[RMDB]
RNA sequence: GGGAACGACUCGAGUAGAGUCGAAAAUCAUCAAGAAGUAGGCUUAGGCCAAUUGCUUGGUGGUGAAGGUAGAGGGAAGGUAGCACUUCGACGCCUCUAAGUACGCUGUGGGAGUAGUGCUUAAAUCAAAAGCACAGCGACUUCGGUCGCUGUGCAACGUCACACAAAGGUUCGCCUUUGUGUGACGAAAAGAAACAACAACAACAAC
Reactivity to 2A3 in 0.01 (KOAc 150mM, MgCl2 10mM, bicine 150mM(pH8.5), 24C), signal-to-noise 1, nucleotides 027 to 156: u020c040a000u000c000a020a000g020a110a050g070u130a070g020g000c010u070u070a040g120g120c000c040a020a080u070u030g070c010u010u000g000g000u000g000g000u010g010a030a000g000g030u110a010g090a070g090g020g030a060a000g010g030u040a000g030c030a000c120u060u000c050g140a100c030g040c020c030u000c050u030a010a090g090u060a030c070g000c110u080g010u120g030g050g000a000g010u110a000g000u020g000c020u070u070a000a100a000u170c090a050a060a100a010g000c000a000c000a020g020c000g000a000c000u000u030c070g060g000u010c000g000c020u000g000u000g050c000a000a000